[RMDB]
RNA sequence: GGGAACGACUCGAGUAGAGUCGAAAAGAUAUGGACGGUCUUUGGUACGAGAAUGUCGGAAACGACAAUUCGAUGAGUACGACCGUCCUAAGUCAAAUCCCCACGUACCUUCGGGUACGUGGGGAAACAUGCGCUGUAGGUUCGCCUACAGCGCAUGAAAAGAAACAACAACAACAAC
Reactivity to 2A3 in 0.01 (KOAc 150mM, MgCl2 10mM, bicine 150mM(pH8.5), 24C), signal-to-noise 2, nucleotides 027 to 126: g000a030u040a010u140g000g000a010c000g020g040u000c050u120u250u250g160g050u040a010c010g000a000g000a140a000u030g000u010c010g020g070a090a060a050c020g030a030c110a190a300u020u000c010g090a210u300g120a100g050u010a020c010g000a010c010c010g000u000c000c000u000a020a000g030u000c020a020a000a110u020c000c000c000c010a010c000g000u000a010c000c000u050u140c300g120g000g020u010a010c030g000u000g010g000g010g080a000a000a000
Reactivity to DMS in 0.01 (KOAc 150mM, MgCl2 10mM, bicine 150mM(pH8.5), 24C), signal-to-noise 1, nucleotides 027 to 126: g000a000u010a220u020g000g030a020c010g030g000u010c010u000u030u010g020g010u000a020c020g010a150g010a030a030u000g000u000c010g000g000a010a030a130c000g040a000c000a070a110u010u000c000g000a170u000g030a140g010u000a070c050g000a000c000c000g000u000c000c000u010a000a060g000u000c000a090a090a240u000c000c000c000c000a010c000g000u000a000c000c000u000u000c170g000g000g010u000a010c030g020u010g000g000g000g010a000a000a060